Structure probing data (2A3 and DMS) for a 177-nucleotide construct. For DMS the reverse transcriptase was MarathonRT.
RNA sequence: GGGAACGACUCGAGUAGAGUCGAAAAUGCACGGUGUAAUCAGAAAACAACCACAGUUAAAGGUCAAUAUCACAAGCAAAAAAAUAAAAUGAUAUACCAUUCAUUUUGAUAAGUAAUCGACUUUAGAUAUAGUAUGGUCAUUCGUGACCAUACUAUAAAAAGAAACAACAACAACAAC
Reactivity to 2A3 in 0.01 (KOAc 150mM, MgCl2 10mM, bicine 150mM(pH8.5), 24C), signal-to-noise 1, nucleotides 027 to 126: u130g000c030a010c130g000g000u040g030u030a070a050u110c020a060g090a050a110a010a030c050a020a020c020c040a030c020a100g010u040u100a080a140a000g020g020u100c020a070a050u010a020u190c060a060c040a090a080g050c050a000a060a060a170a060a060a030u270a050a060a000a020u040g000a000u020a000u020a180c040c010a060u030u020c030a070u110u000u110u040g060a040u060a120a060g070u040a050a100u050c050g050a070c020u090u100u060a060g020a110
Reactivity to DMS in 0.01 (KOAc 150mM, MgCl2 10mM, bicine 150mM(pH8.5), 24C), signal-to-noise 2, nucleotides 027 to 126: u020g050c060a070c080g000g000u000g000u000a060a100u000c060a080g010a160a040a060a080c160a090a030c020c030a110c120a080g010u000u000a050a050a110g010g030u000c060a070a060u000a060u030c020a060c030a090a090g000c060a000a000a000a070a050a090a070u020a020a020a010a050u010g000a040u000a060u010a170c100c040a060u000u000c010a000u010u000u020u000g000a060u010a040a070g020u000a030a120u010c100g000a020c020u000u000u000a040g010a160